[RMDB]
RNA sequence: GGGAACGACUCGAGUAGAGUCGAAAACGCAAAGCUGCAGCGCGGCGCUCUGGAGGCCUUGCCCCGCGCACUGCUCUUUACAUCGCCCGACGUGAGGGCACUUCGCGGGCAGUGCUGCGGCCUCGUGAAACUGCCCCUAAGUUCGCUUAGGGGCAAACAGAAUAGAACUGUUCGCAGUUCUAUUCUGAAAAGAAACAACAACAACAAC
Reactivity to 2A3 in 0.01 (KOAc 150mM, MgCl2 10mM, bicine 150mM(pH8.5), 24C), signal-to-noise 4, nucleotides 027 to 156: c050g000c030a080a060a010g010c010u040g010c000a010g020c020g030c050g080g000c050g070c070u090c080u200g280g040a080g030g010c010c030u050u090g020c020c010c000c020g000c000g000c000a010c000u010g020c010u010c000u040u110u190a060c040a070u080c050g130c100c070c080g080a100c060g030u040g020a050g010g000g010c000a000c010u040u010c010g010c010g000g010g000c010a010g020u010g020c010u000g000c000g000g000c000c000u020c010g010u020g030a080a080a020c070u020g000c010c000c000c000u000a000a010g020u030u110c130g040c110u000u000a000g000g010g000g000c010a000a000a000
Reactivity to DMS in 0.01 (KOAc 150mM, MgCl2 10mM, bicine 150mM(pH8.5), 24C), signal-to-noise 1, nucleotides 027 to 156: c010g030c000a050a040a110g020c040u000g030c010a130g020c010g030c030g000g030c030g030c050u000c040u030g020g010a210g000g020c000c030u000u000g000c030c000c000c010g050c080g020c060a050c010u000g010c000u010c040u000u000u020a080c040a060u010c020g000c100c160c080g010a120c060g010u000g010a120g000g010g040c010a010c010u010u000c010g050c220g060g020g000c040a100g030u000g010c010u010g010c010g020g000c000c020u000c090g000u010g000a100a060a130c080u000g010c010c000c000c020u000a030a050g020u000u000c300g040c010u010u000a010g020g000g030g050c000a000a010a020